Chemical mapping of a 177-nucleotide RNA with DMS and 2A3. Conditions: 150 mM KOAc, 10 mM MgCl2 and 150 mM bicine (pH 8.5), 24 C. The 2A3 profile rests on 1,502 reads. Reactivities are rounded to 0.1 and cut off at 0 and 3. DMS adducts were read by reverse transcription with MarathonRT. Values cover nucleotides 27 to 126.
RNA sequence: GGGAACGACUCGAGUAGAGUCGAAAAAGCUGGCGAUCCACGUCCAUUCGCCGGGCUCUAGAUCUCUGGUGAUCAUGAUGGGGGGCAUAACGGGAGUGUCGCACUGCCACUGUUUUUGGAUGGUGGCCACUGAGGAGUGGUUCGCCACUCCUCAGUGAAAAGAAACAACAACAACAAC
Reactivity to DMS in 0.01 (KOAc 150mM, MgCl2 10mM, bicine 150mM(pH8.5), 24C), signal-to-noise 2, nucleotides 027 to 126: a030g020c090u000g000g010c030g010a070u000c030c060a080c060g010u000c080c070a150u000u000c090g010c050c030g010g010g000c050u020c080u010a110g010a060u010c020u000c070u000g000g010u000g000a050u010c080a070u020g000a090u010g000g010g000g020g000g010c000a050u030a060a100c110g000g010g010a080g000u000g020u010c050g000c120a070c100u000g000c020c010a040c020u010g000u010u010u010u020u010g000g010a030u000g000g020u000g010g040c080
Reactivity to 2A3 in 0.01 (KOAc 150mM, MgCl2 10mM, bicine 150mM(pH8.5), 24C), signal-to-noise 1, nucleotides 027 to 126: a000g050c040u060g040g000c020g050a030u000c040c020a010c030g060u000c030c010a040u100u010c010g000c010c000g030g000g030c050u050c030u060a080g040a160u040c030u000c030u120g080g000u080g070a070u070c070a050u140g050a070u080g020g000g000g000g000g040c020a060u100a080a040c020g000g050g020a070g050u050g020u010c050g000c050a060c090u070g000c010c000a000c010u020g130u030u010u010u150u090g230g000a010u030g020g000u010g000g000c070